[RMDB]
RNA sequence: GGGAACGACUCGAGUAGAGUCGAAAAAAAGAUAUGGACAUAAGGGAGCUGCUCAGAUGCGAUGAAACGCUUCGGAAACGAAGCGUGGAGCAUCUGAACAGCGAAGAACUUAUGUCCUAAGUCAAAACCAAUGAGGAAAGUUCGCUUUCCUCAUUGGAAAAGAAACAACAACAACAAC
Reactivity to 2A3 in 0.01 (KOAc 150mM, MgCl2 10mM, bicine 150mM(pH8.5), 24C), signal-to-noise 1, nucleotides 027 to 126: a010a020a000g080a030u100a040u130g000g010a000c000a020u020a000a000g060g010g000a070g000c010u010g000c000u000c000a000g030a010u010g000c020g300a300u030g000a020a050a000c000g000c000u000u000c020g020g010a090a120a020c000g000a000a020g000c010g000u010g010g000a000g030c000a010u000c000u020g000a020a020c000a000g000c020g020a040a000g000a010a000c000u000u010a000u000g000u000c000c000u000a000a000g000u010c010a020a000a040a150
Reactivity to DMS in 0.01 (KOAc 150mM, MgCl2 10mM, bicine 150mM(pH8.5), 24C), signal-to-noise 2, nucleotides 027 to 126: a100a100a050g010a040u000a300u020g000g000a020c000a000u020a000a000g000g010g000a120g020c000u000g010c020u000c000a000g000a010u000g020c000g010a110u020g030a100a130a000c010g000c000u010u000c000g010g000a090a140a240c020g010a010a000g030c000g010u000g040g000a020g000c000a000u000c000u020g010a010a020c000a000g000c000g010a050a050g050a130a150c000u000u000a020u000g020u000c000c000u000a010a040g000u000c040a130a090a120a240